Chemical mapping of a 177-nucleotide RNA with DMS and 2A3. The reactions ran in a buffer of 150 mM KOAc, 10 mM MgCl2 and 150 mM bicine (pH 8.5), at 24 C. Values cover nucleotides 27 to 126. The data come from the RNA Mapping Database (RMDB), library M2PK90. The 2A3 profile rests on 1,433 reads.
RNA sequence: GGGAACGACUCGAGUAGAGUCGAAAAUCAAACCCGCCCUUGAAGCUCAGUGGUAGAGCGCUUCACUCGUAUUCCAAUACUGCCAUGAAGAGGUCCGCGGUUCAAUCCCGCGUGGUGGCAAAAAAAACUAGGUAUCUAGGUUCGCCUAGAUACCUAGAAAAGAAACAACAACAACAAC
Reactivity to DMS in 0.01 (KOAc 150mM, MgCl2 10mM, bicine 150mM(pH8.5), 24C), signal-to-noise 1, nucleotides 027 to 126: u020c160a030a130a110c030c020c020g010c030c050c020u020u010g000a070a090g010c040u010c040a100g030u010g020g000u000a050g010a080g010c060g000c040u010u000c010a110c120u000c050g000u000a090u010u000c110c100a040a110u010a090c110u000g020c020c050a060u000g010a090a060g000a090g020g000u000c060c010g010c010g000g000u000u010c180a070a280u010c260c000c000g010c030g010u000g020g000u010g000g000c030a000a010a000a070a020a040a040a040
Reactivity to 2A3 in 0.01 (KOAc 150mM, MgCl2 10mM, bicine 150mM(pH8.5), 24C), signal-to-noise 1, nucleotides 027 to 126: u100c000a000a020a100c000c000c000g010c010c000c010u080u060g050a020a030g010c010u000c090a050g030u060g100g060u130a060g020a020g060c020g010c020u060u030c000a070c030u020c040g060u070a190u190u010c030c000a070a090u030a130c040u090g030c000c010a090u070g050a110a110g060a060g090g050u030c000c010g000c000g040g000u000u070c030a050a060u040c040c010c010g000c010g000u020g000g020u070g000g000c000a000a070a040a000a000a000a000a020